The record gives the reactivity of an RNA of 177 nucleotides to DMS. Conditions: 150 mM KOAc, 10 mM MgCl2 and 150 mM bicine (pH 8.5), 24 C.

RNA sequence: GGGAACGACUCGAGUAGAGUCGAAAAGAUAUGGAAACGGAGUCGAUCUAUAUGACAGCAACAGCUUCUGGUCGGAAACGACCAGGAAGACAUGCUGGAGUAUAGAUCGACUCCGUUUCCUAAGUCACGUUUAACUAUAGUUCGCUAUAGUUAAACGAAAAGAAACAACAACAACAAC
Reactivity to DMS in 0.01 (KOAc 150mM, MgCl2 10mM, bicine 150mM(pH8.5), 24C), signal-to-noise 4, nucleotides 027 to 126: g010a050u010a300u000g000g000a010a000a000c000g000g010a040g000u000c000g010a010u000c000u010a000u000a000u000g020a300c010a000g000c000a010a070c170a230g000c030u010u000c000u000g000g010u010c000g000g000a110a100a240c010g010a010c000c000a010g000g020a000a050g000a100c080a130u000g010c000u000g000g010a300g000u000a010u000a000g000a000u000c000g010a000c000u000c000c010g000u000u010u000c000c000u020a000a060g000u000c030a250